Record summary
The record gives the reactivity of an RNA of 177 nucleotides to DMS. For DMS the reverse transcriptase was MarathonRT. The data come from the RNA Mapping Database (RMDB), library TTRINS. Reactivities are rounded to 0.1 and cut off at 0 and 3. Reactivities are given for positions 27 through 126.
RNA sequence: GGGAACGACUCGAGUAGAGUCGAAAAGAUAUGGACUUCCCUAACCCAAAAGUCAGCGAUAAGAAUAUGGUCGGAAACGACCAUCAUUCUUUUGACGCUGUCGCUGGGUUAGGGAAGUCCUAAGUCAGAUUCAACAUGUGUUCGCACAUGUUGAAUCAAAAGAAACAACAACAACAAC
Reactivity to DMS in 0.01 (KOAc 150mM, MgCl2 10mM, bicine 150mM(pH8.5), 24C), signal-to-noise 1, nucleotides 027 to 126: g000a060u020a300u020g000g000a020c000u000u020c010c000c020u010a010a000c000c010c020a010a070a260a160g010u000c010a000g050c020g020a180u000a030a020g010a040a020u020a030u000g000g000u000c010g000g000a090a130a220c000g000a020c000c000a010u010c190a010u010u000c000u010u000u020u000g040a250c090g030c000u000g040u000c020g000c240u000g010g040g000u000u000a010g000g000g000a000a010g050u000c010c000u010a030a090g010u000c060a140